[RMDB]
RNA sequence: GGGAACGACUCGAGUAGAGUCGAAAAGUACAGCAACCACAAGAGCCAUUUAUCGCAUCCACUGAAACGCAUCUCCUUGACGCUGUGGUUGCUCAACGGAAUAGAAAGCUGAGGUGCGGCAUCGGUGUGACGCAGCGAGGUUCGCCUCGCUGCGUCAAAAAGAAACAACAACAACAAC
Reactivity to 2A3 in 0.01 (KOAc 150mM, MgCl2 10mM, bicine 150mM(pH8.5), 24C), signal-to-noise 2, nucleotides 027 to 126: g050u050a020c020a030g030c000a000a000c000c010a010c010a000a130g000a050g040c000c020a170u050u150u040a220u110c030g060c150a000u120c040c000a040c050u000g010a050a050a050c020g000c000a000u000c020u010c020c060u020u110g070a010c120g000c050u060g000u000g000g020u000u000g010c000u000c000a040a000c000g050g010a000a010u160a180g210a000a130a000g120c130u130g020a000g020g020u000g040c000g000g000c000a110u020c060g000g000u020g130

Chemical mapping of a 177-nucleotide RNA with 2A3. Source: RMDB library OK1LIB, as collected in RNAgym. Conditions: 150 mM KOAc, 10 mM MgCl2 and 150 mM bicine (pH 8.5), 24 C. Reactivities are rounded to 0.1 and cut off at 0 and 3.